An RNA of 177 nucleotides, treated with DMS and read out base by base.

RNA sequence: GGGAACGACUCGAGUAGAGUCGAAAAGGCUUACGGGUUGAGCGCCUACGGCCUGUCGCAGCAGUUGAAAAUCUCCACCGAGGAAGCCAACGAGCAGAUGGACGCGUAUUUCGCCCGAUUCGGCGGGUCAUGCACCUAGCUUCGGCUAGGUGCAUGAAAAAGAAACAACAACAACAAC
Reactivity to DMS in 0.01 (KOAc 150mM, MgCl2 10mM, bicine 150mM(pH8.5), 24C), signal-to-noise 1, nucleotides 027 to 126: g000g030c010u000u010a070c070g000g000g000u000u000g040a050g000c090g020c050c140u010a180c180g010g010c010c010u000g000u040c110g020c070a080g050c040a080g010u000u000g000a040a040a140a080u000c040u000c020c100a070c080c070g000a060g000g000a100a070g000c060c040a050a100c060g010a100g040c030a070g030a070u000g010g010a040c090g000c120g000u000a120u000u000u000c040g010c000c030c020g020a050u010u040c070g040g020c050g000g000g010

It was measured as part of the RMDB library OK2TST.
The DMS profile rests on 874 reads.
The reactions ran in a buffer of 150 mM KOAc, 10 mM MgCl2 and 150 mM bicine (pH 8.5), at 24 C.